[RMDB]
RNA sequence: GGGAACGACUCGAGUAGAGUCGAAAAACAUGGUGAAACCCCAUCUCUACUAAAAAUACAAAACAUUAGCCAAGCAUGGUGGCAUGUGCCUAUAAUCCCAGCUACUUGGGAGGCUGAGACAGGAGAAUCGCUUGAACCUGGCAGGCAGAGGUUGCAGUCUCUGUUACAUGUUCGCAUGUAACAGAGAAAAAGAAACAACAACAACAAC
Reactivity to DMS in 0.01 (KOAc 150mM, MgCl2 10mM, bicine 150mM(pH8.5), 24C), signal-to-noise 1, nucleotides 027 to 156: a060c030a050u000g040g030u010g040a030a060a160c010c000c000c020a010u000c010u000c020u000a070c010u010a030a020a070a040a050u020a130c000a030a040a030a120c110a090u000u000a070g010c000c020a120a070g010c060a100u030g010g040u000g020g000c030a100u000g000u000g000c030c000u020a090u000a060a080u000c000c000c000a070g000c030u000a040c040u010u020g000g030g030a040g030g030c010u000g000a070g020a030c040a060g030g000a130g020a040a060u000c050g000c030u020u000g000a040a060c000c010u000g020g060c040a070g010g030c030a040g000a020g000g020u010u000g000c030a150g020
Reactivity to 2A3 in 0.01 (KOAc 150mM, MgCl2 10mM, bicine 150mM(pH8.5), 24C), signal-to-noise 1, nucleotides 027 to 156: a000c030a060u040g020g010u030g060a050a060a030c010c030c020c020a050u010c030u010c000u080a130c120u130a040a050a060a110a030u150a070c120a070a050a100a000c020a090u080u120a000g010c010c000a060a000g050c050a070u110g050g010u010g030g020c040a030u060g000u030g030c000c000u090a090u070a160a080u000c000c000c000a000g000c030u140a100c040u050u010g000g020g000a020g000g040c030u010g020a000g000a050c040a060g030g000a030g060a070a090u040c060g030c070u060u050g040a040a040c010c020u000g030g000c000a000g000g000c000a000g050a000g050g010u020u020g040c000a020g070